[RMDB]
RNA sequence: GGGAACGACUCGAGUAGAGUCGAAAAGAUAAUGUCUUCGGACAUUAUCCACGCCUAAAGGCUUUAAUUAAUUAGCUAAGCCUGCUAAUUUAAAUGGCAUUAACAACUGUCCAUUCGUGGACAGUAAUUUACUUUGUGCAUUCGUGCACAAAGUAAAAAAAGAAACAACAACAACAAC
Reactivity to 2A3 in 0.01 (KOAc 150mM, MgCl2 10mM, bicine 150mM(pH8.5), 24C), signal-to-noise 1, nucleotides 027 to 126: g000a000u010a000a000u010g000u000c000u010u090c260g080g000a000c010a000u010u010a000u000c010c050a020c090g040c000c010u020a110a110a070g170g000c000u080u050u050a040a020u010u070a030a030u010u020a030g010c050u070a070a070g160c010c060u060g000c000u000a080a040u080u040u090a070a100a050u060g030g020c000a010u070u120a110a050c070a060a010c010u000g000u060c010c000a010u060u060c240g080u000g000g000a000c000a000g000u000a000a000
Reactivity to DMS in 0.01 (KOAc 150mM, MgCl2 10mM, bicine 150mM(pH8.5), 24C), signal-to-noise 1, nucleotides 027 to 126: g000a020u000a000a000u000g010u000c000u000u010c220g010g010a010c000a010u000u000a000u010c000c010a060c160g020c000c000u020a090a100a090g020g030c010u000u000u040a040a060u000u000a040a030u010u010a000g010c010u010a130a130g030c260c160u000g000c010u000a010a020u000u030u000a100a040a100u000g000g010c020a130u000u010a080a170c170a070a080c010u000g010u000c000c000a020u000u000c160g030u010g000g000a020c000a010g010u000a000a040